[RMDB]
RNA sequence: GGGAACGACUCGAGUAGAGUCGAAAAGAUAUGGACACAUUGUCAGCGUUAAGCGGGAGCAGGCGACUCGGAAACGAGUCGAACUACCUGCUCCCGCCAUACGCUUGGAUUUAUGUGUCCUAAGUCAGUAUUGACUUUUGUUCGCAAAAGUCAAUACAAAAGAAACAACAACAACAAC
Reactivity to 2A3 in 0.01 (KOAc 150mM, MgCl2 10mM, bicine 150mM(pH8.5), 24C), signal-to-noise 1, nucleotides 027 to 126: g040a040u110a010u270g000g000a000c000a000c000a000u000u000g040u050c010a000g000c000g010u060u070a160a050g000c030g000g000g000a000g010c020a000g120g000c030g010a010c010u010c000g000g040a160a100a080c060g000a000g000u000c000g010a010a020c050u080a020c010c030u030g000c010u000c000c000c010g000c010c000a000u030a000c000g000c020u040u090g070g000a000u180u300u120a010u030g000u020g000u000c000c010u000a030a000g040u000c090a010
Reactivity to DMS in 0.01 (KOAc 150mM, MgCl2 10mM, bicine 150mM(pH8.5), 24C), signal-to-noise 2, nucleotides 027 to 126: g010a080u000a300u000g010g000a010c000a000c000a010u000u010g000u000c020a080g010c010g010u000u000a300a170g030c010g010g050g010a020g000c020a020g000g010c020g010a010c010u000c000g010g000a160a120a260c030g040a010g020u000c000g010a000a030c080u030a300c010c010u020g000c020u000c000c000c000g000c000c010a020u020a000c000g000c000u010u010g040g000a010u010u010u010a030u010g030u000g000u000c000c010u010a000a070g020u010c030a160